[RMDB]
RNA sequence: GGGAACGACUCGAGUAGAGUCGAAAAGGCUCAGGAAACUGAGCCAAGAAUGAUCAGAGAAAAGAACUAGUGACUGAUCAGAACAGAAUAAAAGACCACUAGAAAAUAGGAGCAGGAAACUGCUCCAGGAGAUAGUACGGUUCGCCGUACUAUCUCCAAAAGAAACAACAACAACAAC
Reactivity to DMS in 0.01 (KOAc 150mM, MgCl2 10mM, bicine 150mM(pH8.5), 24C), signal-to-noise 1, nucleotides 027 to 126: g000g050c000u000c000a000g000g000a090a220a230c000u020g000a010g000c070c010a050a040g000a100a260u010g000a000u000c000a000g000a270g000a080a120a080a180g010a140a010c040u020a000g000u000g000a220c010u000g000a000u000c000a040g050a170a300c060a060g020a100a150u010a030a080a080a040g010a190c030c000a100c000u000a000g000a130a030a040a110u050a040g000g000a010g000c000a000g000g020a050a070a190c000u000g000c000u000c000c000a000
Reactivity to 2A3 in 0.01 (KOAc 150mM, MgCl2 10mM, bicine 150mM(pH8.5), 24C), signal-to-noise 4, nucleotides 027 to 126: g000g010c000u000c000a010g040g020a020a040a040c010u000g000a000g000c000c000a000a010g020a010a060u060g010a000u010c000a010g050a000g090a100a090a110a080g110a070a060c000u000a010g040u020g080a040c020u000g000a000u010c000a010g030a100a080c080a010g140a090a030u170a210a130a050a000g110a080c020c020a000c030u020a010g080a120a080a000a020u240a120g000g000a000g000c000a000g000g000a030a000a010c010u000g000c000u000c000c010a000

An RNA of 177 nucleotides, treated with DMS and 2A3 and read out base by base. The DMS profile rests on 1,071 reads. 2A3 adducts were read by reverse transcription with SuperScript II with manganese. The RNA was probed in 150 mM KOAc, 10 mM MgCl2 and 150 mM bicine (pH 8.5) at 24 C. For DMS the reverse transcriptase was MarathonRT.